[RMDB]
RNA sequence: GGGAACGACUCGAGUAGAGUCGAAAAACGCGGAGUACGCUCUGCGACAACACUUCUUUCGACCCGCUAACCGAGACCUAUGGGUCGUUAAAUUACGUCUCUAUCUUACUCACAUAACAUCGCACAAAAAACGUGGUUCGGUUCGCCGAACCACGAAGAGAAUAUAAGUCUUCGGACUUAUAUUCUCAAAAGAAACAACAACAACAAC
Reactivity to DMS in 0.01 (KOAc 150mM, MgCl2 10mM, bicine 150mM(pH8.5), 24C), signal-to-noise 1, nucleotides 027 to 156: a050c010g010c040g010g030a070g030u000a050c110g030c000u000c010u010g000c050g030a180c060a060a130c110a030c080u000u000c020u010u000u010c040g000a090c000c000c000g000c090u010a070a120c040c080g040a100g000a030c020c030u000a170u010g010g010g020u000c000g000u000u010a000a080a100u010u010a090c030g020u000c020u010c020u000a070u000c070u010u010a090c020u010c020a100c080a040u010a040a070c060a110u010c060g020c070a100c100a000a080a070a030a030a170c000g080u000g010g000u000u000c000g000g000u000u000c300g040c030c000g010a000a000c010c000a000c010g010a010a020
Reactivity to 2A3 in 0.01 (KOAc 150mM, MgCl2 10mM, bicine 150mM(pH8.5), 24C), signal-to-noise 6, nucleotides 027 to 156: a000c020g000c000g010g020a000g000u060a020c140g040c040u000c000u000g000c010g050a010c010a080a040c030a030c080u130u100c040u080u300u130c000g000a000c020c010c000g020c180u200a020a010c050c010g010a000g020a020c000c000u040a080u250g000g000g000u000c000g030u020u030a000a040a020u120u040a010c010g020u010c000u010c010u020a090u080c050u070u110a150c060u130c100a060c030a150u180a150a020c040a140u160c070g020c130a040c080a060a080a040a110a090a030c050g000u000g000g000u000u000c000g000g020u010u050c160g040c050c010g000a000a000c000c000a000c000g000a000a000